This 177-nucleotide RNA was probed chemically with DMS. The DMS profile rests on 899 reads. Reactivities are given for positions 27 through 126.
[RMDB]
RNA sequence: GGGAACGACUCGAGUAGAGUCGAAAAGGGGAUGGAGGCCGGGCCGUGGCCAGAGCAGAUACGUAGGCCCAUGAAAUUGAUGAACUGAGAGUUGCUCGCAGUCCUCAGCGCACCAUCUGGAAUUCUAGGAGAUAAUUAACUUCGGUUAAUUAUCUCCAAAAGAAACAACAACAACAAC
Reactivity to DMS in 0.01 (KOAc 150mM, MgCl2 10mM, bicine 150mM(pH8.5), 24C), signal-to-noise 1, nucleotides 027 to 126: g020g000g000g020a050u030g010g010a140g020g020c030c150g020g000g040c030c010g040u000g050g010c030c060a090g010a070g010c040a070g000a090u000a170c110g000u000a150g010g000c020c010c040a090u010g000a110a060a090u000u000g020a050u010g000a050a060c040u010g000a040g010a080g010u000u010g010c040u000c060g020c070a060g010u010c050c000u000c000a050g000c090g020c040a070c020c010a020u000c050u010g000g020a070a110u000u000c050u010a240